[RMDB]
RNA sequence: GGGAACGACUCGAGUAGAGUCGAAAAGCCGUCUUCAUCCGCACCCACGGGCGGCCGCGCGUCAUCCGCGACACGAAGCCGAUGUUCAUUUCGUGCGCCUCGUGCGCGAGCAGGCCGCAGCGCACGACGGAAAAUCGCAGUUCGCUGCGAUUUUCCGAAAAGAAACAACAACAACAAC
Reactivity to DMS in 0.01 (KOAc 150mM, MgCl2 10mM, bicine 150mM(pH8.5), 24C), signal-to-noise 1, nucleotides 027 to 126: g020c020c030g020u010c040u020u010c070a150u000c040c030g010c090a150c030c030c060a160c090g010g000g010c010g000g020c010c010g020c140g020c090g000u010c100a100u010c120c090g030c010g010a150c040a020c000g010a030a080g010c040c080g010a050u000g000u000u020c170a130u020u020u000c000g030u000g000c050g020c030c030u000c050g000u000g030c000g020c000g020a060g040c020a140g030g000c050c030g030c000a140g010c050g000c090a010c070g030a070
Reactivity to 2A3 in 0.01 (KOAc 150mM, MgCl2 10mM, bicine 150mM(pH8.5), 24C), signal-to-noise 1, nucleotides 027 to 126: g010c000c030g040u000c090u130u080c060a190u140c010c010g010c030a020c000c010c000a020c060g010g020g000c050g000g000c000c010g030c000g050c030g180u090c040a090u000c060c030g010c030g080a080c010a010c000g030a000a020g030c020c000g070a110u080g110u230u230c120a210u170u070u080c060g040u080g030c020g080c050c020u030c040g040u050g040c070g020c010g020a020g090c050a050g020g040c040c000g050c000a030g010c020g040c000a050c060g080a040

The data come from the RNA Mapping Database (RMDB), library OK2TRN. This 177-nucleotide RNA was probed chemically with DMS and 2A3.